[RMDB]
RNA sequence: GGGAACGACUCGAGUAGAGUCGAAAAUCCUUCCUUUUCGAAGGAAGGACAGUGCACAGUCUUCGCAUCUGUGAAUCACACAAGAGCCGUGUCUAUGCGAGGUUUUAAUCAAGUUCGCUUGAUUAAACCCCGCAAGACAAUUCGUUGUCUUGCGGGGAAAAGAAACAACAACAACAAC
Reactivity to 2A3 in 0.01 (KOAc 150mM, MgCl2 10mM, bicine 150mM(pH8.5), 24C), signal-to-noise 2, nucleotides 027 to 126: u010c000c000u000u010c000c010u080u050u040u100c190g140a030a010g000g000a000a000g000g000a000c020a030g040u070g000c020a000c000a030g000u020c040u070u040c100g000c020a010u010c010u010g000u020g070a090a070u150c040a020c010a010c010a050a070g010a030g200c010c020g100u110g060u040c050u060a050u040g000c020g000a020g020g030u000u050u050u060a000a000u000c000a000a000g010u040u040c150g060c110u010u010g000a010u010u000a020a010a010
Reactivity to DMS in 0.01 (KOAc 150mM, MgCl2 10mM, bicine 150mM(pH8.5), 24C), signal-to-noise 3, nucleotides 027 to 126: u000c000c000u000u010c000c000u000u010u010u010c150g010a020a020g000g010a020a010g000g000a010c070a060g030u010g040c010a020c040a030g000u000c070u010u010c060g010c050a060u000c000u000g000u000g010a120a060u000c150a180c050a050c050a050a060g000a110g030c050c050g020u000g010u010c080u000a040u000g010c000g010a010g000g010u000u000u000u000a010a000u000c000a010a010g010u010u000c200g020c000u000u000g010a010u000u000a000a000a080